RNA sequence: GGGAACGACUCGAGUAGAGUCGAAAAGCCGUAUGGGAUCGGCCGGAGCGGCGCAGCGGAAUUCCAGCGUUAGAUGGCCUUCGUGCGAUAGCGGUCGCGCUGGUACUCGCCAGCCAUGGCGGCAUCCGGGUGAAUGUCGAUUCGUCGACAUUCACCCAAAAGAAACAACAACAACAAC
Reactivity to DMS in 0.01 (KOAc 150mM, MgCl2 10mM, bicine 150mM(pH8.5), 24C), signal-to-noise 1, nucleotides 027 to 126: g000c000c010g030u000a080u030g020g000g000a160u000c090g010g000c000c000g020g010a230g020c060g030g060c020g000c110a170g010c070g030g010a050a290u010u000c000c000a000g000c020g040u000u010a130g020a060u020g000g000c070c040u010u000c020g020u000g000c150g010a080u000a040g010c020g020g010u000c020g020c070g000c000u000g000g000u000a060c130u010c050g000c030c050a130g030c000c030a020u000g020g010c010g000g000c050a050u000c070c080
Reactivity to 2A3 in 0.01 (KOAc 150mM, MgCl2 10mM, bicine 150mM(pH8.5), 24C), signal-to-noise 1, nucleotides 027 to 126: g050c000c010g010u020a080u100g010g010g060a090u080c050g090g000c000c000g080g120a090g060c110g060g050c060g030c070a000g060c010g050g020a020a020u180u040c010c000a000g000c000g030u050u130a040g020a060u100g150g000c040c000u010u040c110g110u150g150c290g030a050u030a020g060c060g050g020u000c000g040c010g000c000u000g000g020u030a030c090u060c090g010c000c000a020g000c000c020a070u030g080g000c000g000g030c020a030u100c000c050

This 177-nucleotide RNA was probed chemically with DMS and 2A3.